[RMDB]
RNA sequence: GGGAACGACUCGAGUAGAGUCGAAAAGUUAGCCAGCAGUGUGCCGUCUUCCGCACGGAUACGACCGGAGACGGUAACCAUCUGCUUCACCUCUGGCUCAAUGACAGCGACAUUGCCUGGAUAGAGAGCGUACAGUCUAUUUCGAUAGACUGUACGCAAAAGAAACAACAACAACAAC
Reactivity to DMS in 0.01 (KOAc 150mM, MgCl2 10mM, bicine 150mM(pH8.5), 24C), signal-to-noise 4, nucleotides 027 to 126: g000u000u010a050g010c020c010a030g010c070a010g020u000g020u010g000c010c000g000u000c010u010u020c010c010g020c210a300c130g020g000a120u020a090c040g020a190c300c070g020g000a010g020a030c010g010g010u000a000a040c180c160a090u000c030u010g000c000u000u000c080a110c060c020u010c030u000g000g010c050u010c060a050a050u000g000a120c040a090g020c090g000a050c060a030u000u000g000c080c000u000g020g010a130u010a060g010a130g010a170
Reactivity to 2A3 in 0.01 (KOAc 150mM, MgCl2 10mM, bicine 150mM(pH8.5), 24C), signal-to-noise 3, nucleotides 027 to 126: g060u070u070a030g040c030c000a020g000c010a010g010u000g000u010g070c010c000g010u010c020u260u070c010c020g020c020a120c090g050g060a280u210a290c070g040a030c030c020g000g010a010g000a000c000g040g000u010a020a010c010c000a020u060c010u020g010c000u050u030c040a080c000c010u000c050u050g020g000c000u000c040a050a060u080g030a040c020a090g090c050g050a050c040a090u060u070g000c000c020u030g060g000a030u070a080g090a020g000a010